Overview: An RNA of 207 nucleotides, treated with 2A3 and read out base by base. The 2A3 profile rests on 391 reads. The RNA was probed in 150 mM KOAc, 10 mM MgCl2 and 150 mM bicine (pH 8.5) at 24 C.
RNA sequence: GGGAACGACUCGAGUAGAGUCGAAAACGGUUACGCCUUCUUUACCGUUAUCAAGGAAGGUACUCGGCCAUGCUAAGGGAAGCAUUAUUCGUUAGGCGCAUGUCGCCGCCAGCAUGGUGUGAGGGGAAAAAGUAUGCUGGGUUCGCCCAGCAUACAAGGCUUGGCCUUACUUCGGUAAGGCCAAGCCAAAAGAAACAACAACAACAAC
Reactivity to 2A3 in 0.01 (KOAc 150mM, MgCl2 10mM, bicine 150mM(pH8.5), 24C), signal-to-noise 1, nucleotides 027 to 156: c000g020g000u000u090a010c000g000c010c060u010u020c010u000u000u130a070c000c040g080u110u130a130u040c000a000a000g060g000a000a000g020g000u010a010c010u010c000g040g000c000c000a000u000g070c000u150a220a070g100g020g010a000a040g000c020a140u050u150a180u250u030c030g110u140u200a080g000g050c020g000c080a160u040g180u300c040g000c030c000g070c050c000a000g000c070a000u000g040g020u000g110u180g000a000g130g020g000g020a000a170a000a000a000g030u000a000u000g080c000u000g000g000g060u000u050c040g160c010c010c010a000g040c000a000u000a000c000a000a000